[RMDB]
RNA sequence: GGGAACGACUCGAGUAGAGUCGAAAAAACUCAGCUAGGGAGAGUAUAACAUUCAUGUUGACGAGACCUAGACGAAACACAGAGGAAAAUUAUUAAUCACUGGAUAGUAUUAGUAAUUACUCUGUGUAAAACUCUUCUACGUUCGCGUAGAAGAGAACAUGCGGUUAUAGUUCGCUAUAACCGCAUGAAAAGAAACAACAACAACAAC
Reactivity to DMS in 0.01 (KOAc 150mM, MgCl2 10mM, bicine 150mM(pH8.5), 24C), signal-to-noise 1, nucleotides 027 to 156: a100a080c030u000c010a060g040c000u010a030g020g020g040a190g010a150g020u000a080u000a060a060c040a080u000u010c140a100u000g020u000u010g000a170c010g010a260g040a070c000c000u000a040g000a170c150g000a200a110a020c010a000c000a010g000a040g000g000a090a050a000a050u010u000a000u000u000a010a010u000c050a100c040u000g050g020a140u030a090g030u000a010u000u000a010g000u000a000a000u000u010a060c010u000c000u000g030u000g000u000a010a020a030a130c010u010c000u010u000c010u000a010c010g010u010u000c300g000c000g120u000a000g010a010a000g010a000g000a060a070
Reactivity to 2A3 in 0.01 (KOAc 150mM, MgCl2 10mM, bicine 150mM(pH8.5), 24C), signal-to-noise 3, nucleotides 027 to 156: a000a000c010u010c000a000g010c000u020a000g010g030g000a060g000a030g090u130a120u070a300a030c040a050u120u210c050a060u300g020u030u020g050a050c030g040a030g040a070c000c000u000a000g010a030c020g000a020a020a000c000a000c000a010g000a010g000g030a290a140a020a000u000u000a000u000u000a000a010u010c050a000c030u040g000g130a130u260a300g010u030a000u010u000a010g000u000a000a000u010u070a020c000u000c000u020g000u000g000u010a010a000a000a000c000u000c000u000u000c000u000a010c000g030u010u060c250g010c010g100u000a000g000a010a000g000a000g000a000a020
Description: Chemical mapping of a 207-nucleotide RNA with DMS and 2A3. Values cover nucleotides 27 to 156. The 2A3 profile rests on 1,847 reads. For DMS, 2,248 sequencing reads were counted.